[RMDB]
RNA sequence: GGGAACGACUCGAGUAGAGUCGAAAAAUAUCUAUGGAAGUCCAUAUCAUCAUGGAACAUAUUCUAAUGAUCUUGUUAAUGUAGAUUCAAAUAAUAUGAACACAUUCAUUUGUGAUUUACCACCAGCUACUCUAAGGGUGUUCGCACCCUUAGAGUAAAAAGAAACAACAACAACAAC
Reactivity to 2A3 in 0.01 (KOAc 150mM, MgCl2 10mM, bicine 150mM(pH8.5), 24C), signal-to-noise 2, nucleotides 027 to 126: a020u110a030u030c010u020a120u070g050g020a060a000g020u010c010c050a030u050a030u120c060a050u060c030a000u040g000g010a040a010c020a050u110a030u050u130c060u030a120a110u050g020a030u020c030u070u030g040u110u100a080a050u070g040u060a040g030a220u180u020c040a060a060a060u200a080a050u100a120u100g030a070a000c020a020c020a040u030u090c000a070u030u050u060g060u000g070a040u030u010u080a040c030c010a000c010c000a000g010c040
Reactivity to DMS in 0.01 (KOAc 150mM, MgCl2 10mM, bicine 150mM(pH8.5), 24C), signal-to-noise 2, nucleotides 027 to 126: a080u000a060u000c070u000a080u020g000g000a090a060g010u010c010c010a010u010a030u010c200a100u010c200a010u000g020g010a050a250c050a040u000a000u000u010c140u000a030a120u010g000a050u000c040u000u020g010u010u020a080a100u020g010u000a030g010a040u010u020c020a010a070a070u020a050a040u000a010u000g000a070a130c100a050c040a030u010u000c170a020u010u000u000g030u000g030a060u020u010u000a080c020c020a050c130c070a100g010c150